[RMDB]
RNA sequence: GGGAACGACUCGAGUAGAGUCGAAAAGUCUGUGCGUUUCCAUUUGAGUAUCCUGAAAACGGGCUUUUCAGCAUGGAACGUACAUAUUAAAUAGUAGGAGUGCAUAGUGGCCCUUAUAGCAGGCAUUGAGGCGAGGAUUGUUUCGACAAUCCUCGAACUCCUCAUCUCUAUUCGUAGAGAUGAGGAGAAAAGAAACAACAACAACAAC
Reactivity to DMS in 0.01 (KOAc 150mM, MgCl2 10mM, bicine 150mM(pH8.5), 24C), signal-to-noise 3, nucleotides 027 to 156: g030u000c090u000g010u000g010c000g020u000u000u000c000c010a080u000u000u010g010a120g020u000a120u000c050c020u000g000a050a020a090a190c080g020g020g000c080u010u000u010u000c000a070g020c110a040u000g010g000a040a030c020g030u000a020c020a050u000a030u000u000a060a070a120u010a110g020u000a060g020g010a060g020u000g000c040a120u000a110g010u000g020g020c010c010c010u000u010a080u000a070g000c050a080g000g010c040a090u000u000g000a110g020g020c010g030a020g010g010a030u000u010g010u000u010u000c250g010a090c000a030a020u000c010c000u000c010g000a020a080
Reactivity to 2A3 in 0.01 (KOAc 150mM, MgCl2 10mM, bicine 150mM(pH8.5), 24C), signal-to-noise 6, nucleotides 027 to 156: g060u040c040u030g000u010g000c000g010u020u170u090c010c010a020u060u040u030g020a020g030u080a090u150c010c010u040g080a040a050a070a110c140g000g040g000c060u070u060u030u050c040a040g010c030a010u010g000g010a000a000c000g000u010a000c010a000u010a010u000u110a060a080a070u130a030g070u030a020g000g050a020g030u090g030c050a050u050a100g050u050g060g000c010c000c020u020u070a090u060a050g040c050a020g010g010c030a040u030u130g050a040g060g070c010g000a000g000g000a000u000u000g030u020u090u070c050g020a010c010a000a000u000c000c000u010c000g000a000a000
Chemical mapping of a 207-nucleotide RNA with DMS and 2A3. Reactivities are rounded to 0.1 and cut off at 0 and 3. The RNA was probed in 150 mM KOAc, 10 mM MgCl2 and 150 mM bicine (pH 8.5) at 24 C. Reactivities are given for positions 27 through 156. For 2A3 the reverse transcriptase was SuperScript II with manganese.